Annotation:
Structure probing data (2A3 and DMS) for a 177-nucleotide construct. The 2A3 profile rests on 16,656 reads.
RNA sequence: GGGAACGACUCGAGUAGAGUCGAAAAAGCGCGCAAUGUGUACAUGGGUAUUCCCCCAUAUCUGUGUACUAUAGCUGAGAGGACUUGCUUUUUGGGGUGUGCAGUGCAAGUGUAUUUGGUGCGCGAAGUGUAUAUAAAAAUUCGUUUUUAUAUACACAAAAGAAACAACAACAACAAC
Reactivity to 2A3 in 0.01 (KOAc 150mM, MgCl2 10mM, bicine 150mM(pH8.5), 24C), signal-to-noise 9, nucleotides 027 to 126: a000g040c010g000c000g000c020a040a100u130g060u020g000u060a000c000a010u010g010g000g000u000a010u070u150c000c000c000c000c000a000u000a000u000c000u000g010u000g000u000a000c000u080a020u090a040g030c050u070g060a020g020a020g110g060a020c010u010u030g030c000u070u090u040u100u170g060g010g020g020u070g060u060g040c070a050g040u010g080c010a020a040g010u030g030u070a090u050u070u100g050g010u040g000c020g000c010g020a080a030
Reactivity to DMS in 0.01 (KOAc 150mM, MgCl2 10mM, bicine 150mM(pH8.5), 24C), signal-to-noise 7, nucleotides 027 to 126: a120g010c010g020c010g010c020a200a070u020g000u010g000u000a000c010a000u000g000g010g000u000a010u020u020c040c010c000c020c080a300u000a010u000c010u000g000u000g000u010a010c000u020a070u020a190g010c050u010g000a100g010a120g020g010a040c010u000u010g000c010u000u010u010u030u010g010g010g010g020u010g000u010g010c060a050g010u020g000c030a020a030g010u000g010u020a060u010u010u000g010g010u000g000c020g000c000g010a040a090
For 2A3 the reverse transcriptase was SuperScript II with manganese.